Source information: Structure probing data (DMS) for a 177-nucleotide construct. Reactivities are given for positions 27 through 126. Source: RMDB library TTRDES, as collected in RNAgym. The reactions ran in a buffer of 150 mM KOAc, 10 mM MgCl2 and 150 mM bicine (pH 8.5), at 24 C.

RNA sequence: GGGAACGACUCGAGUAGAGUCGAAAAAAAAAAAGAUAUGGAAGGCGCAGCACGACCAAUGAUGGCACUUCGGAAACGAAGUGCUUGAGGUCGUGAACUACUGCAAUCCUUCCUAAGUCAAAAAAAACAACUUAAUAACCUUCGGGUUAUUAAGUUGAAAAGAAACAACAACAACAAC
Reactivity to DMS in 0.01 (KOAc 150mM, MgCl2 10mM, bicine 150mM(pH8.5), 24C), signal-to-noise 1, nucleotides 027 to 126: a000a000a080a110a060a070a090g010a010u000a230u000g010g010a050a000g010g030c300g000c000a020g000c040a010c000g000a010c000c000a120a090u000g010a120u000g010g010c000a040c000u000u010c000g000g010a070a000a130c000g000a020a000g070u000g000c010u000u000g000a120g010g010u000c000g020u000g010a020a000c060u010a300c000u000g010c010a130a200u000c000c000u010u000c000c000u010a010a090g020u000c000a000a000a000a040a120a090a070a220